[RMDB]
RNA sequence: GGGAACGACUCGAGUAGAGUCGAAAAUAGGAUUCGUCCUAACUCUCUCCUAAGUCCAGCGCACUGGUCGGGAGUCCGAUAAGCUUCGGAAACGAAGCUUUUGACGGACGAAGAACGACCAAACGCUGGAUAUGGACUGGUCAUUGUUCGCAAUGAAAUAAUGUCUUAUAUUCGUAUAAGACAUUAUAAAAGAAACAACAACAACAAC
Reactivity to 2A3 in 0.01 (KOAc 150mM, MgCl2 10mM, bicine 150mM(pH8.5), 24C), signal-to-noise 2, nucleotides 027 to 156: u070a020g020g000a020u060u110c200g080u030c080c000u040a080a070c020u010c000u000c010u000c060c000u070a190a060g040u000c010c000a010g000c010g000c040a060c130u020g010g000u000c010g000g010g010a030g010u000c000c000g020a020u010a050a000g000c000u000u010c000g000g000a080a060a030c010g000a000a000g010c000u010u000u000u000g040a020c030g000g000a000c010g000a070a000g010a000a010c000g000a000c000c000a000a000a020c010g000c000u000g000g020a000u010a000u010g000g010a020c080u120g090g070u030c020a020u010u060g060u050u130c220g040c150a030a040u120g080a190a030
Reactivity to DMS in 0.01 (KOAc 150mM, MgCl2 10mM, bicine 150mM(pH8.5), 24C), signal-to-noise 3, nucleotides 027 to 156: u000a040g000g000a100u010u000c190g040u030c010c010u000a040a120c110u010c000u000c010u000c000c050u010a140a230g000u010c000c000a020g010c030g030c060a130c190u000g010g000u010c010g030g000g010a300g010u000c010c010g050a200u010a030a030g020c000u010u000c000g000g010a190a120a190c020g000a010a020g000c010u000u000u000u000g050a200c120g020g000a040c000g000a080a170g000a110a280c020g010a020c010c000a010a070a040c010g010c020u000g010g100a000u000a060u000g020g000a070c040u010g020g030u000c030a080u000u000g010u000u010c130g010c040a080a050u010g010a090a080
Structure probing data (2A3 and DMS) for a 207-nucleotide construct.
For 2A3, 3,700 sequencing reads were counted.
For 2A3 the reverse transcriptase was SuperScript II with manganese.
Values cover nucleotides 27 to 156.